Source: RMDB library RFM100, as collected in RNAgym. An RNA of 177 nucleotides, treated with DMS and 2A3 and read out base by base. Values are in units of 0.01, from 0 to 300, in steps of 10. The reactions ran in a buffer of 150 mM KOAc, 10 mM MgCl2 and 150 mM bicine (pH 8.5), at 24 C.
RNA sequence: GGGAACGACUCGAGUAGAGUCGAAAAAACCCCCUUUUCACUUUGCCAAUUGGACUUAUGUCUUUAUUGAUCAUUCAAGUGAGCAAAGGAAAUACGCUUUAAAAACUCAGGCAAACGGUGUUUGUCUCCUGACCAUAGAUUUCGAUCUAUGGUCAGGAAAAGAAACAACAACAACAAC
Reactivity to DMS in 0.01 (KOAc 150mM, MgCl2 10mM, bicine 150mM(pH8.5), 24C), signal-to-noise 1, nucleotides 027 to 126: a060a030c070c000c030c060c040u000u000u000u070c000a100c000u040u000u000g040c010c000a070a040u000u000g030g010a010c130u010u000a100u010g000u060c000u000u000u010a030u000u060g000a090u000c180a110u040u010c000a040a040g000u000g000a130g000c010a050a000a030g000g000a000a000a070u020a060c300g010c100u000u020u000a010a080a010a190a070c010u040c080a040g000g000c070a030a040a040c040g010g070u010g010u060u000u000g000u000c000u000
Reactivity to 2A3 in 0.01 (KOAc 150mM, MgCl2 10mM, bicine 150mM(pH8.5), 24C), signal-to-noise 5, nucleotides 027 to 126: a010a000c050c000c010c000c000u060u030u000u000c130a140c070u010u010u040g020c010c000a020a070u000u050g000g020a050c050u200u160a130u300g030u000c010u070u220u130a220u200u110g030a040u110c060a050u080u100c040a010a010g030u010g030a060g010c020a020a000a000g000g110a000a020a030u140a020c010g040c070u060u170u210a060a090a030a010a010c120u160c080a010g000g000c010a020a010a010c080g300g090u180g010u090u030u020g010u010c020u010